[RMDB]
Description: The record gives the reactivity of an RNA of 207 nucleotides to DMS and 2A3.

RNA sequence: GGGAACGACUCGAGUAGAGUCGAAAAUGCAUGUGCUGAUUCAAGUGAGACACCCUCUGAUAACUGGUGGAUAGCUGAAAAGUACGUGAAGCUGUUAAAAUCAUCAAUUAGCUAUCUUUUCAACCAACUACAAGCCAAUUCACCUAGCGAUGUUACAUGAACAGAGAUAGUUCGCUAUCUCUGUUCAAAAAGAAACAACAACAACAAC
Reactivity to DMS in 0.01 (KOAc 150mM, MgCl2 10mM, bicine 150mM(pH8.5), 24C), signal-to-noise 3, nucleotides 027 to 156: u010g020c040a070u000g010u010g010c020u000g010a140u000u010c060a070a120g030u000g020a200g030a110c040a060c030c010c030u000c060u000g020a090u010a080a070c040u010g030g040u010g010g020a120u000a090g000c010u030g000a030a010a030a070g020u000a040c140g020u000g010a140a130g010c050u000g020u000u000a040a050a110a180u010c080a120u000c100a050a170u000u000a090g000c030u010a130u000c020u000u000u000u000c040a030a070c010c020a060a010c040u000a050c040a080a100g010c000c020a060a140u000u000c030a050c020c020u010a120g020c050g030a100u010g030u000u010a080c060a190
Reactivity to 2A3 in 0.01 (KOAc 150mM, MgCl2 10mM, bicine 150mM(pH8.5), 24C), signal-to-noise 6, nucleotides 027 to 156: u080g000c010a010u040g010u030g010c020u040g050a180u090u050c090a100a040g020u050g060a050g030a020c010a040c010c040c000u020c040u060g050a070u060a240a060c040u060g000g000u000g010g020a030u020a020g010c000u010g000a000a000a060a030g030u030a020c050g030u070g060a030a010g000c020u040g040u130u150a060a150a100a100u090c040a020u040c040a050a140u070u040a050g010c010u010a040u060c000u070u070u070u060c060a060a050c050c010a010a030c020u110a050c060a100a000g030c020c010a000a010u030u030c010a010c000c010u040a030g020c010g030a030u110g020u090u080a040c040a080
The reactions ran in a buffer of 150 mM KOAc, 10 mM MgCl2 and 150 mM bicine (pH 8.5), at 24 C.